Structure probing data (DMS) for a 177-nucleotide construct. The RNA was probed in 150 mM KOAc, 10 mM MgCl2 and 150 mM bicine (pH 8.5) at 24 C. Values cover nucleotides 27 to 126.
RNA sequence: GGGAACGACUCGAGUAGAGUCGAAAACAAGGUUUGGAAAACAUUGCUUUUAAUGUUGUUAAACAAGGCCAUUUUAUUGGUGUUGAGGGUGAACUACCUGUAGCUGUAGUCAAUGAUAAGAUCUUCAAGUGAAAUCACUGUUCGCAGUGAUUUCACUAAAAGAAACAACAACAACAAC
Reactivity to DMS in 0.01 (KOAc 150mM, MgCl2 10mM, bicine 150mM(pH8.5), 24C), signal-to-noise 1, nucleotides 027 to 126: c050a090a120g010g010u000u020u030g010g030a140a080a020a030c030a020u000u000g010c200u000u010u000u010a050a030u000g010u010u000g000u020u010a090a070a140c070a180a030g000g000c040c000a090u000u020u050u010a160u010u000g000g060u010g010u000u010g000a080g020g010g000u010g020a040a060c080u000a030c040c030u000g000u000a090g060c050u000g000u000a030g000u010c010a060a070u000g000a130u010a070a040g000a100u000c030u000u000c090a090